Source information
This 177-nucleotide RNA was probed chemically with DMS and 2A3. For DMS, 9,719 sequencing reads were counted. The reactions ran in a buffer of 150 mM KOAc, 10 mM MgCl2 and 150 mM bicine (pH 8.5), at 24 C. It was measured as part of the RMDB library TTRDES. DMS adducts were read by reverse transcription with MarathonRT.

[RMDB]
RNA sequence: GGGAACGACUCGAGUAGAGUCGAAAAGAUAUGGACCUGAUGCUCGAUAAGCUCCAGUCGGAAACGACUGCGAGCUUUUGACGAGCUGCCAGGUCCUAAGUCAAAGCUGUUCGUUCGCGAACAGCAAGUAUGUAAGGUGGUUCGCCACCUUACAUACAAAAGAAACAACAACAACAAC
Reactivity to DMS in 0.01 (KOAc 150mM, MgCl2 10mM, bicine 150mM(pH8.5), 24C), signal-to-noise 6, nucleotides 027 to 126: g000a040u000a230u010g000g000a010c000c000u000g000a160u000g010c000u000c000g020a140u010a020a030g010c010u000c000c000a000g010u010c010g010g000a090a050a100c010g010a010c000u000g010c250g010a010g010c010u000u010u000u000g010a220c100g010a010g010c000u000g020c240c020a010g000g010u000c000c000u000a010a080g000u000c030a140a130a140g000c000u000g000u000u000c000g020u000u020c270g010c020g010a010a010c000a000g010c000a010a040
Reactivity to 2A3 in 0.01 (KOAc 150mM, MgCl2 10mM, bicine 150mM(pH8.5), 24C), signal-to-noise 3, nucleotides 027 to 126: g020a000u050a040u110g010g000a010c000c000u010g030a040u100g000c010u000c040g190a210u070a300a000g010c000u000c000c010a000g010u000c010g010g020a080a050a050c000g000a000c000u000g010c040g000a000g000c010u010u000u000u000g010a010c000g000a000g000c000u030g040c020c000a000g020g000u000c010c000u010a030a000g000u010c030a010a080a150g000c000u010g000u010u010c020g010u040u090c300g010c020g170a010a000c000a000g000c000a000a010